The record gives the reactivity of an RNA of 207 nucleotides to 2A3. It was measured as part of the RMDB library OK3TST.
[RMDB]
RNA sequence: GGGAACGACUCGAGUAGAGUCGAAAAGCCGUGUCGGUGCAGACGCCGCGGCAUGGCGCGCAGCUCGUCCGCCGCGUGAUGCUCGACGACCAGCUCCACAACGUCGACCAGUGGGGCAAGUUCGGCCCGAUCUGGGCACCGGCGCCGUUCAAGCGCAGUCGAUCUAAAGUUUCGACUUUAGAUCGACAAAAGAAACAACAACAACAAC
Reactivity to 2A3 in 0.01 (KOAc 150mM, MgCl2 10mM, bicine 150mM(pH8.5), 24C), signal-to-noise 2, nucleotides 027 to 156: g040c010c040g010u020g000u010c030g000g040u060g010c030a040g020a060c100g000c020c010g010c020g010g040c030a040u100g010g000c050g000c070g050c070a090g020c070u150c070g020u030c040c040g000c000c000g020c020g040u120g040a060u050g010c030u000c000g020a000c000g010a030c010c000a030g000c010u000c010c000a070c010a070a140c130g180u200c080g060a150c090c040a010g000u010g000g020g010g000c020a010a000g030u090u050c030g030g020c000c030c000g020a200u100c110u250g010g020g000c010a000c010c000g020g000c000g020c020c010g010u060u070c040a130a050g030c110g050c160a020